[RMDB]
This 177-nucleotide RNA was probed chemically with 2A3 and DMS.
RNA sequence: GGGAACGACUCGAGUAGAGUCGAAAAACGUCCAUGGUACGCCAUGGACGAAUCUGGCUACCUGACCUGUCCAUUGUGGAAGGUCUUACAUUCUCGCUGAUUUCAGGAGCUAUUGAUUAUGCGUAAACUAGUCAUGGAUGUUCGCAUCCAUGACUAGAAAAGAAACAACAACAACAAC
Reactivity to 2A3 in 0.01 (KOAc 150mM, MgCl2 10mM, bicine 150mM(pH8.5), 24C), signal-to-noise 7, nucleotides 027 to 126: a000c010g000u000c000c000a000u010g010g000u040a020c220g030c030c000a000u000g000g000a000c000g000a000a000u040c030u050g050g000c010u060a240c040c020u030g030a050c010c000u080g270u100c010c020a100u210u290g090u290g130g020a020a010g010g010u000c000u000u040a020c010a070u070u040c050u040c060g060c060u080g090a190u050u120u130c030a000g030g030a020g020c040u060a110u090u160g060a080u100u130a090u170g070c060g070u130a040a050a070
Reactivity to DMS in 0.01 (KOAc 150mM, MgCl2 10mM, bicine 150mM(pH8.5), 24C), signal-to-noise 3, nucleotides 027 to 126: a050c010g030u000c000c000a010u000g000g000u010a090c250g020c000c000a010u000g000g000a010c000g010a000a030u000c050u000g010g000c020u030a130c060c030u000g000a040c040c010u020g010u010c010c000a300u000u070g040u030g000g010a300a030g040g000u020c090u020u020a030c120a140u010u010c030u020c020g010c080u000g000a110u010u010u000c070a050g000g000a070g010c030u000a080u010u010g000a060u000u000a100u020g020c100g000u020a070a090a140
Reactivities are given for positions 27 through 126. The reactions ran in a buffer of 150 mM KOAc, 10 mM MgCl2 and 150 mM bicine (pH 8.5), at 24 C.